[RMDB]
RNA sequence: GGGAACGACUCGAGUAGAGUCGAAAAGUUGACUUCGGUCAACCACCACCGUAGGACUGAGAACUACUACGCAGUAGCGAAGAACUUACUUUCGAAAGAGAGUAAGGGAGCUAUCAGGUAGCUCAGUCCUAAACGGGCCUUUGUGCUUCGGCACAAAUAACAGGGAACAGUUCGCUGUUCCCUGUUAAAAAGAAACAACAACAACAAC
Reactivity to 2A3 in 0.01 (KOAc 150mM, MgCl2 10mM, bicine 150mM(pH8.5), 24C), signal-to-noise 3, nucleotides 027 to 156: g000u000u010g000a010c010u040u110c300g060g000u000c000a000a000c010c010a060c010c000a050c010c000g000u010a010g000g010a000c000u010g030a010g050a280a140c060u090a020c000u030a040c210g090c150a000g000u020a000g000c010g120a300a020g000a120a000c000u000u010a000c000u020u000u020c030g080a090a110a080g010a030g000a000g030u010a000a000g010g000g000a010g000c000u000a000u160c040a100g010g010u000a000g010c010u000c000a000g000u000c000c000u000a000a000a000c000g000g010g020c000c040u040u060u060g000u010g000c010u030u040c240g100g020c020a010c000a020a020a010
Reactivity to DMS in 0.01 (KOAc 150mM, MgCl2 10mM, bicine 150mM(pH8.5), 24C), signal-to-noise 2, nucleotides 027 to 156: g010u010u010g000a020c010u020u010c300g060g020u000c010a020a010c000c060a140c040c040a030c000c000g020u000a010g020g010a030c000u050g010a060g010a050a160c010u010a130c010u000a180c170g010c220a160g060u020a040g010c010g000a090a250g000a170a290c000u000u000a000c000u000u000u010c000g030a100a140a210g010a060g010a010g010u000a020a020g010g050g020a150g070c010u010a000u000c050a150g020g020u010a010g010c000u000c000a030g010u000c010c000u000a000a000a090c000g010g000g000c050c060u000u010u020g020u000g020c020u000u020c300g010g030c020a010c000a000a010a080